[RMDB]
RNA sequence: GGGAACGACUCGAGUAGAGUCGAAAAUAAAACACGUAACGUGAGCACAGCUAGUAGUGCAGCAGGACCGAAACCUGCAGCGAAAGGGAUCAAGACCCAGUUCGCGCAAAAACUAGAGAAAAAAAAAACUGAUCUUAUCGUUCGCGAUAAGAUCAGUAAAAGAAACAACAACAACAAC
Reactivity to DMS in 0.01 (KOAc 150mM, MgCl2 10mM, bicine 150mM(pH8.5), 24C), signal-to-noise 1, nucleotides 027 to 126: u000a100a170a140a120c030a010c000g000u000a070a150c220g030u000g000a230g000c000a010c030a040g010c060u000a000g040u000a050g030u000g000c000a160g000c030a040g010g000a050c050c110g000a070a130a000c010c000u000g030c000a150g000c050g010a000a040a060g010g110g000a050u080c290a060a300g000a230c080c000c000a070g040u000u000c000g010c000g000c260a010a010a000a060a030c000u010a000g000a180g020a070a000a040a000a000a050a000a170a070
Reactivity to 2A3 in 0.01 (KOAc 150mM, MgCl2 10mM, bicine 150mM(pH8.5), 24C), signal-to-noise 1, nucleotides 027 to 126: u120a010a100a010a000c100a000c110g130u240a300a000c070g020u040g060a050g000c010a000c010a020g060c040u010a000g020u000a010g000u010g000c000a010g000c020a000g020g060a130c090c040g070a090a000a000c000c010u000g000c030a010g010c000g050a000a000a030g030g010g030a030u240c140a090a080g010a100c030c010c010a060g030u060u000c030g000c000g010c080a000a080a020a040a000c030u030a010g000a050g120a090a050a010a000a000a000a000a000a000